[RMDB]
RNA sequence: GGGAACGACUCGAGUAGAGUCGAAAAUGAAAACUUUAAAUGCGUCAAGUACAUCAAAAGAGGAAACAGAGGGAAAGAACCAGGUUGGCAAACAAGCAAAAAGGCAAGGACGAACCUUCCUCAAGCAUUAGAUUCUGAGUUUCGACUCAGAAUCUAAAAAAGAAACAACAACAACAAC
Reactivity to 2A3 in 0.01 (KOAc 150mM, MgCl2 10mM, bicine 150mM(pH8.5), 24C), signal-to-noise 2, nucleotides 027 to 126: u150g010a040a010a000a000c050u110u110u110a040a140a070u160g000c000g000u030c070a070a020g020u000a170c040a080u100c040a050a120a000a020g100a050g030g010a010a040a040c030a040g040a020g060g030g010a060a080a020g030a000a020c030c000a010g000g050u090u110g010g030c010a000a010a150c020a100a000g010c020a010a030a040a050a000g070g000c070a020a020g000g000a020c030g040a030a160c020c000u030u020c000c010u020c000a020a070g000c020a020
Reactivity to DMS in 0.01 (KOAc 150mM, MgCl2 10mM, bicine 150mM(pH8.5), 24C), signal-to-noise 4, nucleotides 027 to 126: u020g010a170a060a100a130c070u000u000u000a060a090a090u000g000c030g000u000c040a060a080g000u000a060c130a080u020c090a090a030a050a100g000a100g000g000a090a040a070c110a040g010a090g000g010g000a040a040a080g000a030a090c080c090a020g000g000u020u000g020g000c140a050a090a070c100a030a070g000c040a010a080a060a080a030g000g030c060a000a020g000g000a150c170g030a090a140c040c020u000u000c020c010u010c080a060a120g000c060a100